[RMDB]
RNA sequence: GGGAACGACUCGAGUAGAGUCGAAAAGAUAUGGAUUCGUGAUGGCAAUGAUGGAUUGCUACCCACCCUAUUCGGAAACGAAUAGGAGGCAAUCUUGAGCCAUCCGAAUCCUAAGUCAAAAGAUGUCGACGAUCCGUUCGCGGAUCGUCGACAUCAAACAGUGUUAUUACUUCGGUAAUAACACUGUAAAAGAAACAACAACAACAAC
Reactivity to 2A3 in 0.01 (KOAc 150mM, MgCl2 10mM, bicine 150mM(pH8.5), 24C), signal-to-noise 1, nucleotides 027 to 156: g040a000u080a030u190g030g010a000u000u020c050g090u290g090a000u000g010g000c010a120a300u040g010a010u020g030g000a000u010u010g000c040u130a160c030c020c020a050c020c000c000u000a000u000u000c000g040g000a000a040a040c020g000a010a000u000a000g010g000a010g020g020c000a000a000u000c000u000u030g020a010g000c000c010a000u000c000c000g000a000a000u000c000c000u000a010a000g010u010c010a040a000a000a200g000a000u000g000u010c020g040a010c000g000a010u000c040c000g060u040u060c180g010c010g070g000a000u000c000g000u000c000g000a000c000a010u010c000a000a000

An RNA of 207 nucleotides, treated with 2A3 and read out base by base. The 2A3 profile rests on 3,259 reads. The reactions ran in a buffer of 150 mM KOAc, 10 mM MgCl2 and 150 mM bicine (pH 8.5), at 24 C.